The record gives the reactivity of an RNA of 177 nucleotides to DMS and 2A3. High DMS reactivity at an A or C suggests that its Watson-Crick edge is free. It was measured as part of the RMDB library OK2TRN. The RNA was probed in 150 mM KOAc, 10 mM MgCl2 and 150 mM bicine (pH 8.5) at 24 C. The 2A3 profile rests on 2,327 reads. The DMS profile rests on 6,644 reads.
[RMDB]
RNA sequence: GGGAACGACUCGAGUAGAGUCGAAAAACGUUACCCGUACUAUGUGGAAGUAGCGACGUAAUUUCAUAGAGUCAUUCGGUCUGAAUGCUACAUGAAGAACAUAAGCCAGAUGAAGGAACAGAAAGACACCUGUAACUGAAUUCGUUCAGUUACAGGUAAAAGAAACAACAACAACAAC
Reactivity to DMS in 0.01 (KOAc 150mM, MgCl2 10mM, bicine 150mM(pH8.5), 24C), signal-to-noise 6, nucleotides 027 to 126: a110c130g000u000u000a140c010c000c010g030u010a120c080u010a050u000g030u000g010g010a110a090g000u000a030g000c050g010a070c080g010u010a060a110u000u000u000c020a030u010a090g000a050g000u010c020a030u000u000c020g020g010u000c160u030g010a050a020u000g000c010u000a060c050a020u010g010a040a050g000a100a060c090a070u000a060a130g000c040c030a050g000a090u000g000a060a090g000g000a040a080c060a070g000a060a060a100g010a120c200
Reactivity to 2A3 in 0.01 (KOAc 150mM, MgCl2 10mM, bicine 150mM(pH8.5), 24C), signal-to-noise 3, nucleotides 027 to 126: a020c050g020u020u040a100c000c010c000g020u060a040c060u030a040u150g110u130g040g020a100a100g040u040a020g030c000g070a040c050g020u120a050a110u010u040u030c030a040u050a080g020a000g120u110c030a030u040u020c000g180g080u080c160u210g000a050a010u000g000c010u020a020c010a030u060g000a030a040g040a060a010c030a080u110a090a020g030c010c010a020g000a100u140g070a090a010g050g010a070a010c030a030g090a100a120a000g080a000c010